[RMDB]
Record summary:
Chemical mapping of a 207-nucleotide RNA with DMS and 2A3. 2A3 adducts were read by reverse transcription with SuperScript II with manganese. Conditions: 150 mM KOAc, 10 mM MgCl2 and 150 mM bicine (pH 8.5), 24 C. DMS adducts were read by reverse transcription with MarathonRT. Source: RMDB library M2RFPK, as collected in RNAgym.

RNA sequence: GGGAACGACUCGAGUAGAGUCGAAAAGAGCGAUUAGACAAAGGGGUAGAGCUACAUAUUCGAUAGCUGUAUAAUCGUUCAAGUUACAUCAAAACAUCUUCAAUAUUUAUUACUUACUUUCCUUUCUGCCAGAGUACGGUAUUCGUACCGUACUCAAUAAACAUGUAUUGUUCGCAAUACAUGUUUAAAAAGAAACAACAACAACAAC
Reactivity to DMS in 0.01 (KOAc 150mM, MgCl2 10mM, bicine 150mM(pH8.5), 24C), signal-to-noise 4, nucleotides 027 to 156: g000a040g000c030g010a050u000u000a060g010a080c040a080a090a080g020g010g040g050u010a070g020a040g010c020u010a040c040a090u010a180u010u000c160g020a120u010a020g010c020u020g010u010a060u000a030a010u010c050g040u000u000c030a090a100g030u000u010a070c080a100u010c060a070a080a070a070c050a090u000c030u000u010c030a060a120u000a090u000u000u010a090u020u010a070c030u000u000a060c020u000u000u000c010c020u000u000u000c050u000g000c060c090a170g010a020g010u000a000c000g010g010u000a040u000u010c300g030u000a010c020c000g010u000a010c000u000c010a010a040
Reactivity to 2A3 in 0.01 (KOAc 150mM, MgCl2 10mM, bicine 150mM(pH8.5), 24C), signal-to-noise 9, nucleotides 027 to 156: g000a000g000c010g000a010u000u020a010g040a060c060a050a130a060g070g020g020g040u080a040g020a010g060c000u010a010c020a070u270a200u110u250c070g110a130u020a000g000c010u010g030u030a030u000a020a000u000c010g000u000u010c010a030a000g020u030u100a070c050a090u130c080a060a120a080a070c020a110u070c090u230u100c080a120a110u080a230u200u200u110a130u120u120a070c030u080u040a030c000u050u080u090c020c020u040u090u060c020u040g040c030c040a040g000a000g010u000a000c000g010g000u010a020u010u080c110g000u020a000c000c000g000u000a000c000u000c000a000a000